[RMDB]
RNA sequence: GGGAACGACUCGAGUAGAGUCGAAAAAUUUCUUGAACUUUUCGCCAAACCAUCUGCUUCUCGAACGAUAUCAAUACCAAUAAUUUCAACGGCAUGAUUGAAGUCUUUUACCAUUUGCUCGACAAUACAUGCUCACUUAAUUCGUUAAGUGAGCAUGAAAAGAAACAACAACAACAAC
Reactivity to DMS in 0.01 (KOAc 150mM, MgCl2 10mM, bicine 150mM(pH8.5), 24C), signal-to-noise 4, nucleotides 027 to 126: a100u000u000u000c030u010u010g020a060a130c080u000u000u000u000c060g020c030c040a080a140a120c050c060a040u010c030u000g000c060u000u000c030u010c080g000a060a070c060g000a080u010a040u000c060a040a050u010a170c090c030a070a070u010a050a080u000u000u000c080a060a090c170g010g010c050a060u000g020a070u000u010g010a080a100g010u000c030u010u000u000u000a100c050c030a090u010u000u000g040c050u010c060g010a090c130a100a070u000a140
Reactivity to 2A3 in 0.01 (KOAc 150mM, MgCl2 10mM, bicine 150mM(pH8.5), 24C), signal-to-noise 3, nucleotides 027 to 126: a010u040u050u010c000u030u090g050a080a080c020u050u020u070u080c060g020c020c000a080a020a030c030c000a040u010c010u030g040c020u050u030c050u020c040g060a120a060c040g010a010u030a030u130c040a030a030u070a150c000c040a050a020u130a180a120u050u130u100c020a040a000c040g020g000c010a050u040g000a050u000u040g030a020a010g030u050c020u020u140u070u040a060c010c010a080u080u080u040g070c020u060c040g030a040c060a060a010u080a110